[RMDB]
This 177-nucleotide RNA was probed chemically with DMS and 2A3.
RNA sequence: GGGAACGACUCGAGUAGAGUCGAAAACGAUGCCCCAGCCACUGUGAACCUUUCUGCCUGCCCAGAUACACUCAACCCAGGACGAAAUCAGCCUUGGACACCCUGCACUCUGCGCACGCACGCAACAUCCAGAUCAAGCAUUCGUGCUUGAUCUGGAAAAAGAAACAACAACAACAAC
Reactivity to DMS in 0.01 (KOAc 150mM, MgCl2 10mM, bicine 150mM(pH8.5), 24C), signal-to-noise 1, nucleotides 027 to 126: c120g010a080u000g000c020c000c040c030a170g010c010c020a050c070u000g000u000g020a160a070c070c070u000u010u000c020u000g020c010c010u000g000c070c020c040a090g000a110u030a030c050a040c020u000c020a010a090c000c000c020a110g000g000a030c040g000a050a090a050u000c050a050g010c000c010u010u060g030g000a110c060a020c050c050c010u000g000c030a020c010u010c060u040g000c060g000c000a090c060g000c050a070c030g000c050a030a060c180a110
Reactivity to 2A3 in 0.01 (KOAc 150mM, MgCl2 10mM, bicine 150mM(pH8.5), 24C), signal-to-noise 2, nucleotides 027 to 126: c010g040a020u160g050c010c000c030c000a000g000c010c000a070c050u100g020u050g060a060a040c000c040u030u080u050c020u040g020c020c000u000g030c000c000c010a020g000a020u050a020c070a020c000u020c040a060a040c000c000c020a010g070g020a040c020g040a000a050a110u140c030a010g030c010c010u000u040g030g040a020c000a070c030c000c000u010g010c020a010c040u020c030u040g010c000g000c000a040c060g010c000a010c000g090c000a030a000c000a090
Conditions: 150 mM KOAc, 10 mM MgCl2 and 150 mM bicine (pH 8.5), 24 C. High 2A3 reactivity points to a flexible backbone, as in loops and unpaired stretches. Source: RMDB libraries RFM100 and RFMREP, as collected in RNAgym.